[RMDB]
RNA sequence: GGGAACGACUCGAGUAGAGUCGAAAACUUGCGUCGUCCAGCUGUAUUUUGAUAUUGAUAACCACCCGAUUGCGGCGGCGCAUAGGGAUUGUUCUUGAAGUACUCCGGAUCGGCGGCUGCCUCCGCAUGACCACUAAUUAUUCGUAAUUAGUGGUCAAAAAGAAACAACAACAACAAC
Reactivity to 2A3 in 0.01 (KOAc 150mM, MgCl2 10mM, bicine 150mM(pH8.5), 24C), signal-to-noise 4, nucleotides 027 to 126: c010u010u050g000c000g030u010c000g000u030c010c040a050g020c040u070g040u080a120u060u140u060u070g110a070u030a090u230u130g070a050u080a120a090c020c020a040c020c030c040g130a130u030u160g050c050g040g000c030g040g000c020g020c020a010u090a010g020g020g000a070u040u090g040u050u020c020u030u090g040a080a020g050u010a040c020u010c030c020g050g030a100u100c050g060g000c020g070g040c080u080g020c020c010u030c030c000g000c050a060
Reactivity to DMS in 0.01 (KOAc 150mM, MgCl2 10mM, bicine 150mM(pH8.5), 24C), signal-to-noise 8, nucleotides 027 to 126: c040u000u000g010c030g020u000c010g020u000c010c030a140g020c070u010g010u010a040u010u010u010u010g000a090u010a150u000u000g010a090u000a090a120c100c080a100c060c040c020g000a140u010u000g020c050g010g000c070g010g000c020g010c010a010u000a030g000g000g000a150u000u010g010u000u000c050u000u000g010a080a110g010u010a080c060u000c040c040g010g000a060u000c080g000g020c050g010g000c120u000g010c050c020u000c020c020g020c150a130
Chemical mapping of a 177-nucleotide RNA with 2A3 and DMS. Reactivities are given for positions 27 through 126. For 2A3 the reverse transcriptase was SuperScript II with manganese. The reactions ran in a buffer of 150 mM KOAc, 10 mM MgCl2 and 150 mM bicine (pH 8.5), at 24 C. For DMS the reverse transcriptase was MarathonRT.